[RMDB]
RNA sequence: GGGAACGACUCGAGUAGAGUCGAAAAAUUACGUUCGCGUAAUCUGUCGAUAUGGAGUGAUACACUUCGAAGAACUCACCGCGUAUACUCGGAAACGAGUAUACAAUCGGUGAGGGAGAAGUGUCACUCCUAAGUCUUGAUACCAAUUCGUUGGUAACCGCACUUAAUGAUUCGUCAUUAAGUGCGGAAAAGAAACAACAACAACAAC
Reactivity to 2A3 in 0.01 (KOAc 150mM, MgCl2 10mM, bicine 150mM(pH8.5), 24C), signal-to-noise 2, nucleotides 027 to 156: a010u040u020a010c020g020u020u110c200g000c010g130u000a030a030u110c130u200g220u190c070g010a010u030a080u290g020g000a000g020u010g020a050u040a250c000a000c020u010u000c010g160a270a020g010a040a020c000u000c000a000c000c000g030c000g000u010a000u000a000c000u000c000g010g010a030a040a040c010g010a000g000u010a000u000a000c030a010a080u160c050g000g000u010g000a000g000g010g010a060g000a020a000g000u000g000u000c000a000c000u000c010c000u000a000a000g000u000c060u090u150g040a060u050a110c020c000a050a110u110u120c180g070u070u060g010g000u050a120a140
Reactivity to DMS in 0.01 (KOAc 150mM, MgCl2 10mM, bicine 150mM(pH8.5), 24C), signal-to-noise 1, nucleotides 027 to 156: a020u010u010a010c000g000u000u000c270g000c010g030u000a020a000u020c020u030g000u030c020g000a000u000a200u000g000g030a010g010u010g040a130u010a100c050a050c000u000u000c010g010a170a260g030a130a270c000u010c000a000c030c020g040c220g000u010a020u000a010c010u010c020g030g030a100a140a260c040g010a010g010u000a010u010a000c000a030a050u010c050g000g060u000g030a030g030g010g000a130g030a040a020g040u000g000u000c010a000c010u000c000c000u000a000a030g020u000c200u010u030g010a060u000a100c010c000a070a130u010u000c130g010u000u010g010g010u000a060a100
Chemical mapping of a 207-nucleotide RNA with 2A3 and DMS.
2A3 adducts were read by reverse transcription with SuperScript II with manganese.
The 2A3 profile rests on 1,719 reads.
High 2A3 reactivity points to a flexible backbone, as in loops and unpaired stretches.